Structure probing data (DMS and 2A3) for a 177-nucleotide construct.

RNA sequence: GGGAACGACUCGAGUAGAGUCGAAAACAUCAGCGGGGGAUGUGGUGUCGUCUAGCUGGCCGUUAUCGCGUUUGUCUACGUAUUCGGCAACCUUAUCGUAGAUGGCGUCAUCGAGGGGUUUGAGCACCCAGUCACCUAAAUUCGUUUAGGUGACUGGAAAAGAAACAACAACAACAAC
Reactivity to DMS in 0.01 (KOAc 150mM, MgCl2 10mM, bicine 150mM(pH8.5), 24C), signal-to-noise 3, nucleotides 027 to 126: c120a090u010c070a080g040c050g000g000g010g000g010a060u010g020u000g020g020u000g010u000c070g030u010c050u000a100g020c090u000g000g000c020c000g000u010u010a080u020c160g000c030g020u000u000u020g020u000c060u010a020c020g000u020a110u000u000c110g010g020c120a070a060c090c080u010u010a060u010c060g040u010a070g000a050u000g010g010c020g010u010c070a040u000c090g000a100g000g000g020g010u000u010u010g010a100g010c110a150c140
Reactivity to 2A3 in 0.01 (KOAc 150mM, MgCl2 10mM, bicine 150mM(pH8.5), 24C), signal-to-noise 3, nucleotides 027 to 126: c030a080u150c070a040g050c040g030g020g020g000g000a020u080g010u020g050g040u050g020u020c050g030u000c020u020a070g030c030u060g080g000c020c030g030u050u070a110u150c070g000c000g020u030u140u210g110u060c060u020a020c010g040u030a070u040u080c000g040g010c030a040a080c040c020u090u080a070u130c040g030u020a020g010a060u030g040g000c030g040u010c020a030u040c030g020a040g020g010g000g030u030u070u140g080a060g030c000a050c000
For 2A3, 2,772 sequencing reads were counted. Conditions: 150 mM KOAc, 10 mM MgCl2 and 150 mM bicine (pH 8.5), 24 C.